Structure probing data (DMS and 2A3) for a 177-nucleotide construct. The 2A3 profile rests on 21,489 reads. Conditions: 150 mM KOAc, 10 mM MgCl2 and 150 mM bicine (pH 8.5), 24 C.

[RMDB]
RNA sequence: GGGAACGACUCGAGUAGAGUCGAAAAACUCAGGUACAUCACCGUUAGAGCAGUUGAUUACCUUGAUUUCCGCUCCGGUUAUAGGGUCGAUGAUUGUGCUUGUGCAGGAUUCGCAUGCAGUGCAUCCCAUAAAUGGCAUGUUCGCAUGCCAUUUAUGAAAAGAAACAACAACAACAAC
Reactivity to DMS in 0.01 (KOAc 150mM, MgCl2 10mM, bicine 150mM(pH8.5), 24C), signal-to-noise 9, nucleotides 027 to 126: a060c110u000c030a020g000g000u000a020c220a030u000c020a020c050c030g020u030u030a120g000a160g010c080a100g010u010u010g000a040u010u000a020c030c010u010u030g010a050u000u000u000c020c030g010c050u010c040c010g010g010u010u010a070u030a110g010g000g020u000c020g010a080u010g000a100u020u000g010u010g010c040u010u010g000u000g000c080a080g010g010a120u020u020c090g010c040a050u010g010c090a050g000u000g000c030a080u010c030c040
Reactivity to 2A3 in 0.01 (KOAc 150mM, MgCl2 10mM, bicine 150mM(pH8.5), 24C), signal-to-noise 9, nucleotides 027 to 126: a000c040u030c020a010g030g010u040a030c030a140u020c010a010c020c030g090u130u160a070g020a030g120c100a040g020u110u080g030a030u030u040a030c010c000u030u160g040a060u060u030u020c010c020g020c030u030c020c020g050g020u070u080a090u150a160g090g010g020u040c030g050a070u090g020a060u060u140g030u040g030c030u050u040g020u030g030c030a040g060g100a170u100u090c040g010c040a030u080g050c040a010g020u010g040c010a050u040c010c000